An RNA of 207 nucleotides, treated with 2A3 and DMS and read out base by base. Source: RMDB library OK3TST, as collected in RNAgym. For DMS the reverse transcriptase was MarathonRT. Reactivities are given for positions 27 through 156.
RNA sequence: GGGAACGACUCGAGUAGAGUCGAAAAAGUUCUAGUCCUCACCUAAGAUCAGACUAACAGGGCCCUCAAAGCAAGAGCACUUGGUUGGGCUUUGUGGUGGGGAUGAGUGUCUCAUUUUUAGUCCCAAAUUAAAAACGAGAUUUUGGGCUGUACAUCAACUAAUAGGUCAGUUCGCUGACCUAUUAGUAAAAGAAACAACAACAACAAC
Reactivity to 2A3 in 0.01 (KOAc 150mM, MgCl2 10mM, bicine 150mM(pH8.5), 24C), signal-to-noise 3, nucleotides 027 to 156: a010g060u080u040c020u010a010g020u020c000c000u000c010a010c010c030u120a120a020g030a160u170c080a050g100a180c040u050a030a020c010a010g000g020g000c010c000c000u050c060a040a060a010g030c020a140a000g050a030g160c030a040c120u040u030g120g000u160u060g010g020g000c000u010u000u010g010u010g000g000u000g000g000g000g000a000u020g000a010g000u030g060u000c020u000c040a110u090u180u050u060u160a040g060u160c010c000c000a000a030a020u080u070a050a020a040a020a020c160g020a090g010a170u020u020u020u060g010g000g020c030u060g030u100a050c050a100u080c020a060
Reactivity to DMS in 0.01 (KOAc 150mM, MgCl2 10mM, bicine 150mM(pH8.5), 24C), signal-to-noise 3, nucleotides 027 to 156: a080g000u010u010c020u000a260g020u000c010c000u010c000a060c010c010u010a100a120g020a180u000c090a130g000a190c060u000a130a130c070a060g000g030g010c040c000c010u000c050a080a060a140g010c060a080a110g010a190g030c050a080c000u000u000g040g020u010u000g020g030g040c020u010u010u000g030u000g020g040u000g010g010g010g000a000u000g000a110g020u000g020u000c010u020c010a030u010u000u000u000u010a080g020u000c060c050c090a050a090a100u000u010a010a030a020a050a030c020g000a040g010a170u000u000u000u000g000g010g020c100u010g000u000a050c090a150u000c040a180